An RNA of 207 nucleotides, treated with 2A3 and DMS and read out base by base. It was measured as part of the RMDB library OK3TST. The reactions ran in a buffer of 150 mM KOAc, 10 mM MgCl2 and 150 mM bicine (pH 8.5), at 24 C. 2A3 adducts were read by reverse transcription with SuperScript II with manganese.
[RMDB]
RNA sequence: GGGAACGACUCGAGUAGAGUCGAAAAACAUUUCUCAGUGCCAUGGACUGAAUAUUCAUGUCCCUCCCAAAUUCGUAUGUUGAAAUCCUAACCCCAAUGUGAUGGUAUUAGGACAUGGGGCCACUGGGAGAUAAUUAGGUCAUGAAUGGUAUUAGUGCUUCCUCUUAUACUUCGGUAUAAGAGGAAGAAAAGAAACAACAACAACAAC
Reactivity to 2A3 in 0.01 (KOAc 150mM, MgCl2 10mM, bicine 150mM(pH8.5), 24C), signal-to-noise 3, nucleotides 027 to 156: a000c030a030u030u040u000c010u000c010a010g050u010g090c040c020a060u110g040g000a050c020u090g090a120a140u200a100u180u060c020a020u060g070u070c010c020c000u070c010c000c020a020a070a000u110u130c200g070u160a110u160g110u050u100g050a090a060a030u020c000c000u000a030a060c010c000c000c040a050a040u170g030u080g120a130u050g030g010u070a070u030u040a060g020g010a000c000a000u030g000g000g030g020c080c070a030c020u010g010g080g000a000g000a000u010a000a100u100u100a040g000g000u030c020a040u070g030a020a040u080g060g030u160a080u150u140a040g110u090g060
Reactivity to DMS in 0.01 (KOAc 150mM, MgCl2 10mM, bicine 150mM(pH8.5), 24C), signal-to-noise 2, nucleotides 027 to 156: a050c060a060u010u000u000c000u000c010a140g030u000g020c090c020a060u020g040g030a090c030u030g020a110a110u010a120u000u000c030a040u010g000u000c000c020c040u000c020c000c000a050a110a190u010u000c060g020u010a080u010g030u000u010g010a090a100a080u000c030c010u010a060a040c000c010c000c010a080a130u000g040u000g020a170u000g020g020u000a080u000u000a080g000g000a040c030a060u020g000g020g040g030c100c000a070c060u000g000g000g000a050g000a080u000a050a060u020u000a100g000g020u000c020a030u010g010a040a050u000g020g010u000a070u010u010a090g050u000g000